[RMDB]
RNA sequence: GGGAACGACUCGAGUAGAGUCGAAAAAUGUUGGUGAUAGUGCGGAAGUUGCAGUUAAAAUGUUUAAAAAAAACUUUUAACGUACCAAUGGAAAAAGUCAAAACACUAGUUGCAACUGCAGAAGCUGAUAGGUUAUUCUUCGGAAUAACCAAAAGAAACAACAACAACAAC
Reactivity to DMS in 0.01 (KOAc 150mM, MgCl2 10mM, bicine 150mM(pH8.5), 24C), signal-to-noise 5, nucleotides 027 to 129: a040u070g010u020u090g000g000u000g030a110u000a010g030u000g000c000g020g000a180a030g000u000u030g000c050a000g020u000u000a010a050a020a030u050g020u000u030u090a010a000a000a110a180a130a130a030c050u070u010u010u010a010a170c050g020u030a120c200c200a030a020u050g000g020a040a060a010a040a010g000u000c100a100a040a040a040c060a050c060u040a000g010u000u000g000c000a020a020c060u040g040c100a150g010a130a090g030c020u050g020a080u020a150
Reactivity to 2A3 in 0.01 (KOAc 150mM, MgCl2 10mM, bicine 150mM(pH8.5), 24C), signal-to-noise 3, nucleotides 027 to 129: a000u160g000u030u040g020g010u090g020a090u020a080g120u030g060c000g020g030a070a000g000u030u010g000c030a030g000u030u030a000a010a100a120u180g060u030u050u110a100a010a000a030a010a010a000a000c000u000u000u000u000a020a000c010g000u030a170c060c030a020a050u070g060g010a050a050a000a000a000g080u060c110a010a010a030a030c070a000c080u020a010g030u000u010g000c010a020a000c000u040g000c040a030g000a230a020g050c050u020g000a080u070a120

Chemical mapping of a 170-nucleotide RNA with DMS and 2A3. DMS adducts were read by reverse transcription with MarathonRT. The RNA was probed in 150 mM KOAc, 10 mM MgCl2 and 150 mM bicine (pH 8.5) at 24 C. Values are in units of 0.01, from 0 to 300, in steps of 10. Values cover nucleotides 27 to 129. The DMS profile rests on 14,341 reads. As a SHAPE reagent, 2A3 marks flexible, mostly unpaired nucleotides at the ribose 2'-OH.